An RNA of 177 nucleotides, treated with 2A3 and DMS and read out base by base. For DMS the reverse transcriptase was MarathonRT. The DMS profile rests on 15,809 reads. For 2A3 the reverse transcriptase was SuperScript II with manganese. The RNA was probed in 150 mM KOAc, 10 mM MgCl2 and 150 mM bicine (pH 8.5) at 24 C. It was measured as part of the RMDB library OK2TST.

[RMDB]
RNA sequence: GGGAACGACUCGAGUAGAGUCGAAAAAGGCUGCAGAACAGCAAAUAUUACAAAACGGCAAAUGUUGCUGCCUGAUUCUUCCUCUGGAAGCUUCGUUGCAGAGGGGCACCCAGCCGUAUGAGGUGUACAACAGUGAAAAAUUCGUUUUUCACUGUUGAAAAGAAACAACAACAACAAC
Reactivity to 2A3 in 0.01 (KOAc 150mM, MgCl2 10mM, bicine 150mM(pH8.5), 24C), signal-to-noise 4, nucleotides 027 to 126: a000g060g000c020u040g010c030a040g030a230a060c000a030g040c020a020a170a010u150a020u090u110a100c070a040a150a100a030c050g050g020c040a050a090a160u170g040u090u030g030c010u000g000c000c010u010g010a040u040u040c000u070u030c010c000u040c040u050g040g070a040a040g050c070u140u140c080g170u090u090g010c020a000g000a020g050g000g020g020c000a020c000c010c000a010g020c010c020g020u020a120u120g110a110g000g040u060g030u040a020
Reactivity to DMS in 0.01 (KOAc 150mM, MgCl2 10mM, bicine 150mM(pH8.5), 24C), signal-to-noise 9, nucleotides 027 to 126: a090g010g000c020u000g010c040a110g010a110a300c040a040g000c030a060a070a080u010a070u000u010a110c110a060a080a090a090c140g000g000c040a060a050a050u010g000u000u000g000c010u000g000c040c070u010g000a130u000u000c030u000u000c000c000u010c110u010g010g010a040a040g000c170u000u000c080g010u000u000g010c020a020g000a040g010g000g010g010c080a040c020c010c030a100g000c030c030g010u000a080u000g000a090g010g010u000g010u000a190